[RMDB]
RNA sequence: GGGAACGACUCGAGUAGAGUCGAAAAUGUAAUACCCCAAGCAGCAAUAGGUGCCAUAAUACCUCCACCAACAUUAUGCGCAACGUUCCAAAGGGCAGUCUUACUUCCGCGUUCACUUACACUAAACCGAUGUAAACGCAUUCGUGCGUUUACAUCGAAAAGAAACAACAACAACAAC
Reactivity to DMS in 0.01 (KOAc 150mM, MgCl2 10mM, bicine 150mM(pH8.5), 24C), signal-to-noise 2, nucleotides 027 to 126: u000g000u070a030a050u030a180c030c000c000c060a060a090g020c050a110g000c050a050a050u000a090g000g000u020g000c010c060a050u000a120a060u000a160c090c030u010c050c000a080c060c020a090a120c140a060u000u020a050u020g000c050g000c070a060a100c030g010u000u000c000c000a000a110a150g000g010g030c120a020g000u000c050u000u000a070c070u000u000c030c000g010c010g000u000u010c050a060c030u000u000a010c110a030c030u020a020a000a060c110
Reactivity to 2A3 in 0.01 (KOAc 150mM, MgCl2 10mM, bicine 150mM(pH8.5), 24C), signal-to-noise 6, nucleotides 027 to 126: u190g020u050a050a040u120a180c000c000c000c000a030a050g030c040a000g000c020a030a150u080a210g010g080u060g050c020c020a050u070a120a040u070a140c000c030u050c030c010a060c020c010a030a030c020a080u100u100a040u120g040c070g010c060a050a060c040g080u080u010c010c000a040a070a020g010g020g000c020a020g030u020c040u020u050a120c000u020u020c000c010g060c000g020u050u040c030a030c050u030u090a040c060a010c070u080a050a090a060c060
Notes: An RNA of 177 nucleotides, treated with DMS and 2A3 and read out base by base. For 2A3 the reverse transcriptase was SuperScript II with manganese. Reactivities are given for positions 27 through 126. Values are in units of 0.01, from 0 to 300, in steps of 10. For DMS the reverse transcriptase was MarathonRT. The reactions ran in a buffer of 150 mM KOAc, 10 mM MgCl2 and 150 mM bicine (pH 8.5), at 24 C.